The data come from the RNA Mapping Database (RMDB), library OK2TRN. An RNA of 177 nucleotides, treated with DMS and 2A3 and read out base by base. The RNA was probed in 150 mM KOAc, 10 mM MgCl2 and 150 mM bicine (pH 8.5) at 24 C. DMS (dimethyl sulfate) methylates the pairing face of unpaired adenines and cytosines. For DMS the reverse transcriptase was MarathonRT. Values cover nucleotides 27 to 126. The DMS profile rests on 864 reads.
RNA sequence: GGGAACGACUCGAGUAGAGUCGAAAAGGCACAGAGAUGAACCCAUGGAAAUAUUUAAGCUCUCCCAUUGUCUGAUUCACAGAUUCGAGCUUGGGUGCGUAUAGUAGUUCAUCUCAAUGGGAGUGCAGCUCAGCAGACUAUUCGUAGUCUGCUGAGCAAAAGAAACAACAACAACAAC
Reactivity to DMS in 0.01 (KOAc 150mM, MgCl2 10mM, bicine 150mM(pH8.5), 24C), signal-to-noise 1, nucleotides 027 to 126: g000g000c050a060c060a130g010a010g010a010u000g000a080a030c020c090c130a120u000g010g010a060a120a070u000a000u000u000u000a060a020g010c020u000c000u010c070c070c040a100u030u000g040u010c010u000g000a230u020u010c210a210c040a040g010a040u000u020c210g000a050g010c010u010u000g020g020g040u000g030c180g000u050a160u030a070g020u000a050g030u000u000c040a020u000c010u010c020a020a050u000g000g010g010a150g000u000g010c040a120
Reactivity to 2A3 in 0.01 (KOAc 150mM, MgCl2 10mM, bicine 150mM(pH8.5), 24C), signal-to-noise 1, nucleotides 027 to 126: g180g000c070a040c040a050g020a000g010a030u040g020a020a030c060c010c030a040u070g040g070a070a190a110u130a050u020u140u090a090a010g000c020u040c030u000c030c040c000a010u030u030g010u000c010u020g080a160u230u080c110a040c000a260g010a000u120u170c070g010a020g050c000u040u020g050g040g000u040g000c040g010u130a150u140a250g070u000a000g000u000u040c010a000u000c040u020c000a020a000u060g000g040g000a050g010u010g000c000a020